[RMDB]
RNA sequence: GGGAACGACUCGAGUAGAGUCGAAAACCUACUCAAUACGUCCUGGUCGUACAGAACGGUAACAUGUUUUCCGAACAUCCGCGCUUGGGUAUACGAGUAUACACCUUACCCAACCCUCGCCAACGGGAGUGCAUCCACGAGUUCGCUCGUGGAUGAAUUCGUUAUUAUGUUUCGACAUAAUAACGAAAAAAGAAACAACAACAACAAC
Reactivity to DMS in 0.01 (KOAc 150mM, MgCl2 10mM, bicine 150mM(pH8.5), 24C), signal-to-noise 4, nucleotides 027 to 156: c020c030u010a090c100u000c050a100a110u010a050c020g030u000c000c010u000g030g020u010c220g030u020a180c030a050g020a020a050c010g020g000u000a080a140c100a140u010g020u000u000u000u010c030c050g000a100a120c040a090u000c010c010g000c040g020c050u000u010g020g010g020u000a050u000a100c090g000a120g020u000a080u000a130c120a070c070c060u000u000a040c000c000c000a100a050c010c020c020u000c130g020c040c040a080a060c060g000g000g020a070g020u000g020c010a030u010c010c000a000c010g000a040g010u000u000c300g040c000u000c000g010u000g000g010a010u010g000a020a080
Reactivity to 2A3 in 0.01 (KOAc 150mM, MgCl2 10mM, bicine 150mM(pH8.5), 24C), signal-to-noise 9, nucleotides 027 to 156: c010c000u020a040c040u040c050a080a120u100a160c030g050u040c010c030u050g020g020u090c060g050u100a070c030a080g050a100a020c020g040g030u090a080a050c070a180u120g050u040u050u060u060c040c020g030a050a020c010a080u040c030c020g030c010g000c070u020u030g020g020g000u040a060u030a070c070g020a030g090u020a020u050a070c090a090c020c040u050u080a030c010c010c020a020a050c030c000c000u030c030g030c030c010a050a050c030g020g010g010a040g030u080g030c000a000u000c000c000a000c000g000a000g010u060u060c160g060c100u000c000g000u000g000g000a000u000g000a000a010